[RMDB]
RNA sequence: GGGAACGACUCGAGUAGAGUCGAAAAUCGUCCUGGCGACCCUGGCUACCGGCGAGAUGAAUAUAGAGCGGGACGCUCAUGCCGUCCUGAAGCGCCUGACUGAAGGCCUGCGGAAUAAUCACCCCACCAUCAGAGUCGAUUUCGAUCGACUCUGAUGAAAAGAAACAACAACAACAAC
Reactivity to 2A3 in 0.01 (KOAc 150mM, MgCl2 10mM, bicine 150mM(pH8.5), 24C), signal-to-noise 1, nucleotides 027 to 126: u010c010g030u000c010c000u000g010g030c020g010a040c000c040c000u020g020g000c000u020a040c020c060g070g000c030g060a070g020a100u180g090a170a010u230a050u110a140g100a000g090c010g030g040g000a030c050g000c000u090c030a080u190g090c000c000g020u030c010c000u030g040a050a020g000c030g000c060c010u060g070a160c060u100g030a120a030g050g010c010c010u020g020c000g110g000a030a080u100a070a040u110c020a020c020c030c000c000a000c000
Reactivity to DMS in 0.01 (KOAc 150mM, MgCl2 10mM, bicine 150mM(pH8.5), 24C), signal-to-noise 2, nucleotides 027 to 126: u000c150g010u030c010c050u000g030g020c050g000a070c020c060c080u000g000g000c010u000a030c200c120g030g000c000g020a140g010a110u020g010a090a120u020a140u000a060g000a190g020c030g010g010g000a060c020g020c040u020c140a130u020g010c110c010g000u000c020c010u000g010a120a080g000c130g000c000c000u000g000a120c130u000g000a060a100g000g000c060c030u000g020c070g010g000a070a030u000a040a150u010c130a120c050c000c020c060a100c180